[RMDB]
RNA sequence: GGGAACGACUCGAGUAGAGUCGAAAAAAAAAAGAUAUGGAUGUGUGACGUCGUUUGGGCAUCGAUCAGGCUUCGGAAACGAAGCCUGGGAGCCUUUGCGACGCAAUGCACAUCCUAAGUCAAAAAAGUAGUGAUACUUGUUCGCAAGUAUCACUACAAAAGAAACAACAACAACAAC
Reactivity to DMS in 0.01 (KOAc 150mM, MgCl2 10mM, bicine 150mM(pH8.5), 24C), signal-to-noise 1, nucleotides 027 to 126: a000a030a130a110a040a080g000a020u010a300u000g010g000a010u010g010u000g000u000g000a100c010g000u000c000g010u000u000u000g000g030g010c000a270u000c280g000a110u010c010a000g000g050c030u000u000c000g000g000a110a050a170c020g020a020a010g000c000c000u010g000g000g000a020g020c000c000u000u000u000g010c000g030a010c020g010c070a030a040u010g000c010a010c000a010u010c000c000u030a020a080g020u000c010a010a100a100a050a080a090
Reactivity to 2A3 in 0.01 (KOAc 150mM, MgCl2 10mM, bicine 150mM(pH8.5), 24C), signal-to-noise 2, nucleotides 027 to 126: a010a030a010a000a000a110g080a030u120a060u180g000g000a000u000g050u000g010u070g300a060c000g000u000c020g010u010u040u060g060g030g000c070a300u300c130g070a160u070c020a020g000g030c010u000u000c010g020g030a090a070a090c030g000a030a000g000c010c000u000g000g000g010a000g000c010c010u000u020u000g030c000g010a000c010g000c000a010a020u110g000c000a000c000a000u020c000c000u000a040a010g020u000c120a110a060a000a130a000a010